RNA sequence: GGGAACGACUCGAGUAGAGUCGAAAAUGAUUUUAUGCCUCACCUCCAGUAGGCACCUUGGUCUCUUUGGGCUAAUCUCUGGCUCCUCUGCACUAACUCUUGCUCUCACCCAGCUAAUCCCUGCCUCGUGUUGUGCAUAAUUCGUUAUGCACAACACAAAAGAAACAACAACAACAAC
Reactivity to 2A3 in 0.01 (KOAc 150mM, MgCl2 10mM, bicine 150mM(pH8.5), 24C), signal-to-noise 8, nucleotides 027 to 126: u100g080a080u050u050u090u160a100u170g020c000c000u030c010a050c020c020u050c020c000a040g030u060a050g070g030c010a050c000c010u040u080g060g010u030c010u010c000u080u070u080g050g010g000c010u050a060a070u070c050u010c020u050g030g000c000u000c010c000u030c010u030g010c030a020c040u060a120a010c010u030c010u050u060g020c000u000c000u010c010a050c000c010c000a010g010c020u030a040a070u040c010c000c010u030g050c000c020u070c030
Reactivity to DMS in 0.01 (KOAc 150mM, MgCl2 10mM, bicine 150mM(pH8.5), 24C), signal-to-noise 4, nucleotides 027 to 126: u030g010a130u020u010u030u010a060u020g000c020c020u010c110a060c060c030u020c050c080a110g000u010a090g000g010c030a070c050c050u000u000g000g030u010c030u010c030u000u000u010g010g010g020c050u010a070a080u020c040u000c030u000g000g020c030u000c010c020u010c030u000g020c050a070c070u010a070a090c050u000c040u000u000g000c040u000c020u000c060a090c040c020c040a070g000c050u000a060a110u010c010c010c020u000g010c070c050u000c180
Source: RMDB libraries RFM100 and RFMREP, as collected in RNAgym. This 177-nucleotide RNA was probed chemically with 2A3 and DMS. For 2A3 the reverse transcriptase was SuperScript II with manganese. The reactions ran in a buffer of 150 mM KOAc, 10 mM MgCl2 and 150 mM bicine (pH 8.5), at 24 C.